The record gives the reactivity of an RNA of 177 nucleotides to 2A3 and DMS.

[RMDB]
RNA sequence: GGGAACGACUCGAGUAGAGUCGAAAAGAGGAUUCAACGAGCUUCGUAGCAACGAUAGCAACGUAGCUUUUGCUACGACCCCAGCUAUCGAGGGUAGCUACGUCCCGUGCUCGAGGGCAGAAUCCGAAAUAUAUCGUCGAUUCGUCGACGAUAUAUUAAAAGAAACAACAACAACAAC
Reactivity to 2A3 in 0.01 (KOAc 150mM, MgCl2 10mM, bicine 150mM(pH8.5), 24C), signal-to-noise 8, nucleotides 027 to 126: g140a030g000g000a020u000u020c020a040a030c030g000a010g010c010u080u060c030g020u010a000g000c010a050a060c020g010a010u010a010g000c010a050a080c010g000u010a000g000c020u140u210u220u300g000c000u010a000c010g150a180c040c020c000c010a010g000c000u000a000u010c000g010a100g080g120g060u120a050g000c000u000a010c000g030u050c020c050c030g040u060g000c010u010c010g020a120g060g070g020c080a050g010a010a000u000c000c000g000a000
Reactivity to DMS in 0.01 (KOAc 150mM, MgCl2 10mM, bicine 150mM(pH8.5), 24C), signal-to-noise 9, nucleotides 027 to 126: g020a210g010g010a020u000u000c010a180a130c030g000a030g000c050u000u000c010g020u000a010g020c010a130a170c030g000a020u000a010g010c010a080a140c020g020u000a010g000c000u010u010u000u000g020c000u000a010c000g000a240c100c070c060c130a140g000c010u000a000u000c000g000a100g000g020g010u000a100g010c000u000a010c020g000u010c090c070c100g010u010g010c010u000c010g010a080g020g010g020c220a130g000a020a010u000c000c010g000a080
It was measured as part of the RMDB library OK2TRN.